Chemical mapping of a 177-nucleotide RNA with DMS and 2A3. The RNA was probed in 150 mM KOAc, 10 mM MgCl2 and 150 mM bicine (pH 8.5) at 24 C. It was measured as part of the RMDB library TTRDEL.

RNA sequence: GGGAACGACUCGAGUAGAGUCGAAAAGAUAUGGACCAGGUGGCUUGCAUCGAUCUCGGAAACGAGGGAGCAAACCACUGGUCCUAAGUCAAAUCGUCCAGGGCAUGUUCGCAUGCCCUGGACGAAACUACACGAUUUAGUUCGCUAAAUCGUGUAGAAAAGAAACAACAACAACAAC
Reactivity to DMS in 0.01 (KOAc 150mM, MgCl2 10mM, bicine 150mM(pH8.5), 24C), signal-to-noise 2, nucleotides 027 to 126: g000a020u000a300u000g000g010a020c000c000a020g020g010u000g040g030c030u000u000g010c000a290u010c140g000a050u020c010u000c000g020g000a130a070a200c020g010a010g010g020g000a040g030c000a010a010a030c000c000a020c010u000g010g000u000c000c000u000a000a050g000u000c010a090a100a150u000c000g020u020c000c000a020g000g000g000c000a010u000g000u020u020c150g000c020a050u000g000c000c000c000u000g010g030a000c010g010a000a010a200
Reactivity to 2A3 in 0.01 (KOAc 150mM, MgCl2 10mM, bicine 150mM(pH8.5), 24C), signal-to-noise 2, nucleotides 027 to 126: g020a010u110a040u150g000g000a010c030c030a070g200g260u040g030g020c030u010u000g000c020a210u300c130g100a130u000c030u000c020g000g050a100a050a010c020g000a000g000g030g000a020g000c010a000a020a000c000c000a000c000u000g000g000u010c010c000u010a020a000g020u000c010a010a010a240u040c010g000u020c010c030a000g080g050g000c000a020u030g050u140u210c300g010c160a020u000g050c050c000c000u020g000g000a000c010g010a000a000a000